This 177-nucleotide RNA was probed chemically with 2A3 and DMS. Conditions: 150 mM KOAc, 10 mM MgCl2 and 150 mM bicine (pH 8.5), 24 C. Values cover nucleotides 27 to 126.

[RMDB]
RNA sequence: GGGAACGACUCGAGUAGAGUCGAAAAGGAGCAUCAAUAGUCCACCAUAUGUGAAACAUUUGGACACCAUGGGAACCGUGGGUCGUGGACAGCCCGAGAUCUCUGCGGGAGAUUCAUGAUGGCUCCAGGCUGCUUACGCCUUCGGGCGUGGGCAGCCAAAAGAAACAACAACAACAAC
Reactivity to 2A3 in 0.01 (KOAc 150mM, MgCl2 10mM, bicine 150mM(pH8.5), 24C), signal-to-noise 7, nucleotides 027 to 126: g020g000a000g020c010a000u020c010a000a180u120a100g010u000c000c000a020c020c000a070u050a060u120g100u050g200a160a130a070c040a070u070u070u160g070g010a020c080a100c110c000a010u020g020g010g180a150a150c060c010g010u000g010g010g010u060c070g000u010g000g000a000c010a010g030c000c020c000g030a030g010a020u030c020u000c020u080g080c110g050g140g000a030g020a030u080u080c030a040u070g020a000u010g150g000c000u000c000c000a000
Reactivity to DMS in 0.01 (KOAc 150mM, MgCl2 10mM, bicine 150mM(pH8.5), 24C), signal-to-noise 4, nucleotides 027 to 126: g000g000a000g000c000a040u000c020a030a080u020a190g000u000c010c000a080c120c070a060u000a010u010g010u010g030a200a170a300c020a040u000u000u020g000g000a170c060a100c010c010a010u000g000g020g030a110a140c060c020g000u000g010g000g040u000c080g000u000g000g000a030c000a100g010c050c020c000g040a080g020a020u000c030u000c020u040g020c170g000g000g000a030g000a060u000u010c070a140u010g000a000u000g000g010c010u000c030c040a100